[RMDB]
RNA sequence: GGGAACGACUCGAGUAGAGUCGAAAAUGACGCCCUCUGCAGGCACCGUCGUGACCGGAUUCCUUGACUCACUUUGUGUGCGCGUUGAUUGCGCACGGCCACCUUCCGCUCAGACCGGCGCGGAGGUAUUCGAAACCCUGUUCGCAGGGUUUCGAAUAAAAGAAACAACAACAACAAC
Reactivity to 2A3 in 0.01 (KOAc 150mM, MgCl2 10mM, bicine 150mM(pH8.5), 24C), signal-to-noise 2, nucleotides 027 to 126: u080g050a020c050g000c000c000c000u040c020u070g050c090a080g010g030c060a060c020c060g050u050c040g020u020g020a060c010c000g010g020a090u030u040c010c000u040u010g060a040c030u000c030a030c000u020u080u020g060u050g000u020g020c000g000c000g110u050u190g110a160u030u220g000c000g000c030a000c000g000g000c030c020a010c000c000u100u100c000c000g050c030u030c030a020g050a130c030c050g000g000c000g000c010g000g010a000g010g040u000
Reactivity to DMS in 0.01 (KOAc 150mM, MgCl2 10mM, bicine 150mM(pH8.5), 24C), signal-to-noise 1, nucleotides 027 to 126: u040g000a110c110g010c130c020c020u000c150u050g010c170a210g020g010c060a070c050c020g070u000c060g040u000g020a120c080c000g000g020a300u020u050c070c060u000u040g000a020c080u010c050a100c110u020u010u000g000u070g000u000g000c020g000c020g020u030u000g000a130u050u020g020c000g010c070a000c010g000g010c060c070a120c000c000u000u000c010c000g000c000u010c010a200g000a020c110c020g010g000c190g020c130g030g010a030g000g050u000
Description: This 177-nucleotide RNA was probed chemically with 2A3 and DMS. Reactivities are rounded to 0.1 and cut off at 0 and 3. For DMS, 1,429 sequencing reads were counted.